[RMDB]
RNA sequence: GGGAACGACUCGAGUAGAGUCGAAAACCUCGCAUCGCAAGUUCGUGCUUGCGACUUACACGUAGGGCGAGGGGUGUGCGAAAGUUGCCAUGAGACCGUAACUUUCGUAGUCAUUGAUAAAGGGGCACAUGCCCUGACUAGUUCGCUAGUCAGGGAACCUGUUUCUAUCGUUCGCGAUAGAAACAGGAAAAGAAACAACAACAACAAC
Reactivity to DMS in 0.01 (KOAc 150mM, MgCl2 10mM, bicine 150mM(pH8.5), 24C), signal-to-noise 2, nucleotides 027 to 156: c000c010u000c010g050c100a170u000c010g020c000a060a020g010u000u000c260g010u010g010c000u010u020g010c000g000a000c070u000u000a100c100a160c110g010u020a100g000g020g030c020g040a040g000g000g000g040u000g020u020g010c000g000a020a020a020g030u010u000g000c020c020a230u010g000a260g020a180c090c200g000u000a020a020c040u000u000u000c020g010u000a060g010u000c070a100u010u020g010a110u010a040a120a120g020g010g000g040c060a100c060a110u000g000c000c010c000u010g000a010c000u010a000g000u000u010c270g000c010u010a020g010u000c010a000g020g010g000a000a020
Reactivity to 2A3 in 0.01 (KOAc 150mM, MgCl2 10mM, bicine 150mM(pH8.5), 24C), signal-to-noise 5, nucleotides 027 to 156: c000c000u000c000g020c010a020u020c000g000c000a010a010g010u170u180c120g190u300g110c000u000u000g000c000g010a010c010u030u080a060c090a050c100g200u140a100g010g090g000c010g010a000g020g000g000g040u070g000u000g000c000g000a000a010a000g010u010u010g020c040c030a090u130g090a050g020a250c050c030g000u010a000a000c000u000u000u000c010g000u000a010g010u020c030a060u020u150g060a030u130a130a090a060g010g000g000g030c060a070c010a100u140g020c000c000c000u000g000a000c000u000a000g020u060u040c170g030c120u000a000g000u010c000a000g000g000g000a010a010